[RMDB]
RNA sequence: GGGAACGACUCGAGUAGAGUCGAAAACAACAGGGAGGUUGGUGGUGGACGAGCCACUCGCCAACCGGGUCAGGUCCGGAAGGAAGCAGCCCUAACGAGCGAGGCACGGGUCGCCGUGCCAGUACAAAGUUCACCUACGAUUCGUCGUAGGUGAACUAAAAGAAACAACAACAACAAC
Reactivity to 2A3 in 0.01 (KOAc 150mM, MgCl2 10mM, bicine 150mM(pH8.5), 24C), signal-to-noise 2, nucleotides 027 to 126: c040a010a030c080a080g110g100g000a110g000g050u030u020g000g000u010g010g020u020g020g070a090c090g010a060g240c010c000a000c010u090c010g030c010c000a000a000c010c010g000g000g010u030c010a000g000g050u040c000c000g090g100a090a050g020g020a010a010g020c010a000g000c000c000c040u090a120a050c090g060a040g130c030g020a110g010g000c000a000c030g010g050g020u170c120g010c220c000g010u000g000c040c000a000g000u020a040c040a020a190
Reactivity to DMS in 0.01 (KOAc 150mM, MgCl2 10mM, bicine 150mM(pH8.5), 24C), signal-to-noise 3, nucleotides 027 to 126: c030a070a110c050a100g000g000g000a120g000g040u010u000g010g010u000g040g040u000g010g020a170c300g000a180g010c030c010a010c000u000c020g010c000c000a010a020c020c050g000g020g010u000c010a300g000g000u000c020c010g030g040a110a130g010g000a050a020g000c030a290g040c020c000c000u000a070a080c170g020a130g020c090g000a130g020g000c000a010c020g000g000g050u010c300g040c000c000g030u000g000c000c030a100g000u010a080c090a040a070

Chemical mapping of a 177-nucleotide RNA with 2A3 and DMS. DMS adducts were read by reverse transcription with MarathonRT. Conditions: 150 mM KOAc, 10 mM MgCl2 and 150 mM bicine (pH 8.5), 24 C. It was measured as part of the RMDB library M2PK90. The DMS profile rests on 1,475 reads.